[RMDB]
RNA sequence: GGGAACGACUCGAGUAGAGUCGAAAAGCGCCAGUCGGAGCCCCUGGCUGAGGGCGGUCAGCCAGCUUCUCAGCGCCCAUCCCUCCGGAGAGCAGCCGGGGGGCAUGACCGACCCACCGGGGCGCCGGGAAUCUUUAAUUUUCGAAUUAAAGAUUCCAAAAGAAACAACAACAACAAC
Reactivity to DMS in 0.01 (KOAc 150mM, MgCl2 10mM, bicine 150mM(pH8.5), 24C), signal-to-noise 2, nucleotides 027 to 126: g030c150g000c020c000a120g040u050c000g000g000a120g000c000c020c010c020u040g030g030c230u010g000a070g000g000g000c010g000g000u020c000a050g000c130c110a090g000c000u020u020c080u040c130a130g020c030g020c050c070c060a080u050c020c010c040u000c070c070g020g000a100g010a120g060c160a100g010c000c030g000g000g000g020g010g020c100a010u000g010a030c000c010g000a090c020c000c010a090c050c020g060g000g010g000c000g000c000c050g020
Reactivity to 2A3 in 0.01 (KOAc 150mM, MgCl2 10mM, bicine 150mM(pH8.5), 24C), signal-to-noise 7, nucleotides 027 to 126: g080c090g090c030c030a030g120u120c020g020g010a010g000c000c010c030c070u180g060g000c120u060g060a180g000g010g010c010g010g000u010c000a010g040c070c040a020g010c020u140u060c090u050c090a020g010c010g040c020c020c010a100u070c010c000c000u020c010c010g030g000a130g020a020g140c130a040g060c010c000g000g000g010g000g000g010c000a050u050g000a000c000c000g080a160c000c000c000a010c000c000g000g000g000g000c000g000c000c000g010